[RMDB]
Structure probing data (DMS) for a 177-nucleotide construct. The DMS profile rests on 657 reads.

RNA sequence: GGGAACGACUCGAGUAGAGUCGAAAAAAGCUCAUUUUCGAAUGAGCUUGAAGCGUGAACGCAGGAUAACGGAGAAACGCGCCGCUGAACCUCCCAAGCGAAAGAUUAAGGUCUUCGGACCUUAAAAAAGCUACAAACAGUUCGCUGUUUGUAGCUUAAAAGAAACAACAACAACAAC
Reactivity to DMS in 0.01 (KOAc 150mM, MgCl2 10mM, bicine 150mM(pH8.5), 24C), signal-to-noise 1, nucleotides 027 to 126: a050a000g000c000u000c000a000u000u000u000u030c250g030a010a010u000g000a000g010c000u000u000g020a070a030g060c020g080u000g010a080a060c040g090c070a120g010g060a190u000a090a110c070g010g000a140g020a130a160a010c070g000c030g010c020c020g050c000u000g010a140a050c120c050u000c000c000c030a070a080g020c090g020a180a030a040g000a300u010u000a000a000g000g020u000c000u000u000c260g040g020a030c000c010u000u000a000a000a040a110